An RNA of 177 nucleotides, treated with DMS and read out base by base. Source: RMDB library OK2TRN, as collected in RNAgym. For DMS the reverse transcriptase was MarathonRT. Conditions: 150 mM KOAc, 10 mM MgCl2 and 150 mM bicine (pH 8.5), 24 C.
[RMDB]
RNA sequence: GGGAACGACUCGAGUAGAGUCGAAAAUUGGGGUCAGAGAAAGUUCUACUUAGUGCAGGACACUUGGCCAAAAAUGGAACCUGAUAUGUUUCAAUAAAAAAGUGACAGGUGAUUGCUCUGCCAUCCAUGACUAAGUUCCUUUCGAGGAACUUAGUCAAAAAGAAACAACAACAACAAC
Reactivity to DMS in 0.01 (KOAc 150mM, MgCl2 10mM, bicine 150mM(pH8.5), 24C), signal-to-noise 1, nucleotides 027 to 126: u010u000g010g030g030g040u020c030a060g020a000g030a120a040a100g000u000u000c000u000a070c020u010u010a180g020u010g030c020a010g010g000a100c020a030c030u000u000g010g010c010c020a050a050a120a060a090u000g030g000a030a020c000c130u020g040a150u020a090u010g010u000u000u000c010a090a090u040a010a120a020a050a000a110g010u010g020a060c000a010g010g010u000g020a090u010u010g010c030u010c010u010g000c000c000a070u000c050c080a090